[RMDB]
Chemical mapping of a 177-nucleotide RNA with 2A3 and DMS.
DMS adducts were read by reverse transcription with MarathonRT.
RNA sequence: GGGAACGACUCGAGUAGAGUCGAAAAGAUAUGGACGCAUCCUGAUGGCACGAUGAAAUCUUUCGGAAACGAAAGAUGGAGUGCCGCAGGAGUGCGUCCUAAGUCAAAAGUUACCUUCGGGUAACAACAAUCUUUGAUUCUUCGGAAUCAAAGAUUGAAAAGAAACAACAACAACAAC
Reactivity to 2A3 in 0.01 (KOAc 150mM, MgCl2 10mM, bicine 150mM(pH8.5), 24C), signal-to-noise 3, nucleotides 027 to 126: g020a040u070a050u190g000g000a000c000g000c000a030u060c010c020u160g120a300u250g050g000c020a000c020g270a300u090g020a010a030a000u000c000u000u000u000c000g030g030a090a110a110c020g010a010a000a010g000a010u010g000g000a010g000u000g000c000c000g000c000a000g020g000a020g030u030g000c000g000u000c000c000u000a000a010g010u000c000a000a010a040a140g020u010u000a000c010c000u020u070c300g170g030g000u000a000a010c010a000a010
Reactivity to DMS in 0.01 (KOAc 150mM, MgCl2 10mM, bicine 150mM(pH8.5), 24C), signal-to-noise 4, nucleotides 027 to 126: g000a080u010a300u010g000g010a000c000g010c000a080u000c000c000u000g010a120u010g020g010c010a010c010g000a140u010g000a120a090a020u000c000u000u010u000c000g000g000a140a150a190c000g000a010a010a000g000a000u000g000g000a060g020u000g000c010c010g000c000a010g000g010a030g030u020g040c000g010u000c000c000u000a010a100g000u010c060a100a080a120a160g010u000u000a010c000c000u010u000c260g030g010g000u000a010a000c000a130a230